[RMDB]
RNA sequence: GGGAACGACUCGAGUAGAGUCGAAAAUAAACGCUUUCGAAGGAAAGCUUGACCAGCUAAUCUUCUGCAACGCCAUUACGAGGACUGCCCUUAGAGGCUCAUGGCGAUAGGUCACCCCGCCGGUCGGUUAAGAAUCAGCGAUUCGUCGCUGAUUCAAGACUCAUCGUUAGUUCGCUAACGAUGAGUCAAAAGAAACAACAACAACAAC
Reactivity to 2A3 in 0.01 (KOAc 150mM, MgCl2 10mM, bicine 150mM(pH8.5), 24C), signal-to-noise 3, nucleotides 027 to 156: u130a000a060a010c080g020c040u060u080u100c080g050a070a040g070g020a170a080a010g030c000u000u060g030a010c000c010a000g000c010u080a100a090u060c080u140u070c070u070g050c040a090a040c000g000c000c000a040u120u110a060c080g050a100g050g090a080c130u120g020c000c010c000u090u120a150g030a120g120g000c010u000c010a010u000g020g000c000g060a080u090a070g070g000u030c010a070c010c000c000c000g010c040c020g040g070u070c020g010g010u050u080a180a020g000a000a000u000c010a000g000c000g010a000u000u080c140g050u000c000g030c000u000g000a000u000u000c000a000a000
Reactivity to DMS in 0.01 (KOAc 150mM, MgCl2 10mM, bicine 150mM(pH8.5), 24C), signal-to-noise 1, nucleotides 027 to 156: u010a100a050a070c100g010c010u000u000u000c020g010a300a150g010g010a020a050a030g000c000u010u010g000a040c050c010a060g020c010u000a070a050u000c060u000u000c050u000g070c000a140a230c070g000c010c050a050u000u000a050c050g030a160g000g000a070c050u000g010c010c020c020u010u010a090g010a160g010g000c010u010c040a050u000g030g020c030g000a150u000a050g010g000u000c010a150c060c020c000c040g030c010c000g000g000u000c040g010g000u000u010a050a300g010a010a010u000c010a010g010c000g010a060u000u030c300g020u000c000g040c010u000g010a010u000u000c010a030a120